An RNA of 207 nucleotides, treated with 2A3 and read out base by base. Reactivities are given for positions 27 through 156. Conditions: 150 mM KOAc, 10 mM MgCl2 and 150 mM bicine (pH 8.5), 24 C.
[RMDB]
RNA sequence: GGGAACGACUCGAGUAGAGUCGAAAAGGAACGUUUCGACGUUCCAUACGUGCGUACUACGUAAAACAUGUGCGAAGAACUUCGGAACUACUCCCAAAUAGGAGCCGAAGGGAGCACAUGGGGUACGUAUCGCGAAUCAGGAUGCUUCGGCAUCCAAACAGGUCGGACAAUUCGUUGUCCGACCUGUAAAAGAAACAACAACAACAAC
Reactivity to 2A3 in 0.01 (KOAc 150mM, MgCl2 10mM, bicine 150mM(pH8.5), 24C), signal-to-noise 1, nucleotides 027 to 156: g080g000a000a000c100g010u030u060u300c300g220a070c000g000u000u000c000c000a000u070a080c090g170u150g000c000g000u020a070c000u020a030c100g100u060a000a050a050a000c000a000u000g010u000g050c000g270a300a000g030a040a080c000u000u000c000g010g000a020a000c030u130a090c020u290c000c000c100a300a300a000u300a300g000g000a010g060c000c000g070a000a000g000g000g040a010g060c000a020c000a000u010g000g000g000g000u050a100c000g000u020a190u300c050g000c000g000a020a180u130c150a010g000g000a000u000g000c000u020u010c100g080g000c000a000u010c120c060a000a000